The record gives the reactivity of an RNA of 207 nucleotides to 2A3 and DMS.
DMS adducts were read by reverse transcription with MarathonRT.
The DMS profile rests on 2,627 reads.
The reactions ran in a buffer of 150 mM KOAc, 10 mM MgCl2 and 150 mM bicine (pH 8.5), at 24 C.
For 2A3, 1,234 sequencing reads were counted.
[RMDB]
RNA sequence: GGGAACGACUCGAGUAGAGUCGAAAACAAUACGUGGGUAGCACAGGGUACAUUUUUCGGCUUUGCCUGUUUUGUGGUUGAAGUAGACCUUCUUGUAGGGGCAACCUGACACACACAUGCGCCAACCGCGGCAGCGAUCCUGGUCGACUAGGACGAAAAUUUUAAUCACGUUCGCGUGAUUAAAAUUAAAAGAAACAACAACAACAAC
Reactivity to 2A3 in 0.01 (KOAc 150mM, MgCl2 10mM, bicine 150mM(pH8.5), 24C), signal-to-noise 3, nucleotides 027 to 156: c040a050a080u130a140c060g020u080g010g050g010u050a030g040c030a030c020a100g040g030g040u140a080c040a130u120u090u030u030u090c060g010g000c090u100u040u120g000c010c020u010g070u090u130u060u050g060u030g010g080u050u070g020a100a020g020u080a080g040a130c030c000u010u010c020u090u190g080u130a040g020g020g010g000c060a080a030c020c010u050g050a000c000a000c000a000c000a000c020a180u090g010c020g000c040c020a040a020c050c040g040c010g010g000c020a000g030c010g030a020u010c000c020u030g020g020u030c010g020a100c040u040a050g040g010a010c030g030a090a110
Reactivity to DMS in 0.01 (KOAc 150mM, MgCl2 10mM, bicine 150mM(pH8.5), 24C), signal-to-noise 1, nucleotides 027 to 156: c070a120a120u010a030c050g030u000g020g000g080u000a120g010c090a090c050a060g020g000g010u000a070c050a100u000u000u000u000u000c010g070g020c040u000u000u000g000c010c020u000g050u000u020u000u000g020u010g020g010u010u000g020a100a080g020u000a120g020a080c020c040u000u000c080u010u020g020u010a060g000g010g000g020c020a070a050c020c030u040g000a070c030a050c000a060c020a120c080a120u000g020c000g040c020c030a020a030c040c050g030c040g000g000c100a100g000c060g020a040u000c010c030u000g000g030u000c000g030a090c030u010a150g010g010a040c050g010a080a040